[RMDB]
RNA sequence: GGGAACGACUCGAGUAGAGUCGAAAAUCUUCGAUGAAGUUGUUACACCCGACCAAUAUAUAGAGAAGUUUGAGACUGCUGUUAUUGACAUCACUCCUGAUCCCAAGCCAGAUGAAAUUAGUGCAGAUAAAGAAAGGACAACGAUGAUAUGGCGAACAUAUCGUGGGAAGUUCGCUUCCCACGAUAUAAAAGAAACAACAACAACAAC
Reactivity to 2A3 in 0.01 (KOAc 150mM, MgCl2 10mM, bicine 150mM(pH8.5), 24C), signal-to-noise 1, nucleotides 027 to 156: u040c040u110u060c060g040a070u100g070a060a090g000u030u040g020u050u040a020c020a010c000c030c040g010a040c010c000a050a000u080a010u080a010u130a240g070a000g050a140a070g030u030u150u130g040a070g010a020c010u030g040c040u050g100u150u000a020u070u070g030a030c030a040u070c000a010c040u040c030c070u040g040a040u070c010c000c000a000a000g040c010c010a090g040a100u090g130a010a170a030u060u060a070g040u010g080c000a000g040a060u100a010a080a010g110a040a020a030g080g000a000c050a070a000c010g030a020u090g020a000u040a050u070g040g010c020g000a020a000c020
Reactivity to DMS in 0.01 (KOAc 150mM, MgCl2 10mM, bicine 150mM(pH8.5), 24C), signal-to-noise 2, nucleotides 027 to 156: u000c050u010u000c080g020a190u000g010a080a300g000u010u000g040u000u000a230c040a120c000c000c010g050a120c050c030a100a220u000a120u000a090u000a110g000a180g020a070a060g020u000u000u000g020a100g000a080c030u000g020c000u040g010u000u010a170u000u000g010a130c090a130u000c040a060c010u010c030c030u010g000a080u010c040c020c010a060a120g000c020c020a080g020a180u010g000a130a060a070u010u000a080g050u000g030c060a060g000a080u010a050a090a140g040a140a120a110g010g010a070c070a050a130c080g010a060u020g040a180u000a080u000g020g020c060g000a060a070c150